The record gives the reactivity of an RNA of 207 nucleotides to 2A3.

RNA sequence: GGGAACGACUCGAGUAGAGUCGAAAAUACUGCGGUUCGCCGCAGUAAAAAAUCCUAAGUCGUCCUUUGAUCAUAUACAGCCUUUGAUCUAUCGGAAACGAUAGGGAGGCUGGUAUGGGAGGACGAUAUGGAAAAAACGGAAUCUUCGGAUUCCGAACGUAAAAGCAGGUUUCGACCUGCUUUUACGAAAAGAAACAACAACAACAAC
Reactivity to 2A3 in 0.01 (KOAc 150mM, MgCl2 10mM, bicine 150mM(pH8.5), 24C), signal-to-noise 2, nucleotides 027 to 156: u030a000c000u000g000c020g030g030u020u090c140g050c050c000g000c010a010g000u040a020a020a000a010a010a030u010c020c000u040a090a030g020u000c000g010u020c000c000u260u250u140g080a070u170c000a000u020a020u090a300c000a020g020c000c000u240u260u080g020a050u040c000u010a000u000c010g090g000a120a070a040c020g000a000u000a010g000g010g010a000g000g000c000u010g000g000u010a000u000g000g000g010a000g000g000a000c000g000a000u000a020u010g000g080a100a060a000a020a000a010c010g000g000a000a000u000c000u050u110c230g120g010a010u000u030c000c000g020a100a010
2A3 adducts were read by reverse transcription with SuperScript II with manganese.
It was measured as part of the RMDB library RNAMAK.
The reactions ran in a buffer of 150 mM KOAc, 10 mM MgCl2 and 150 mM bicine (pH 8.5), at 24 C.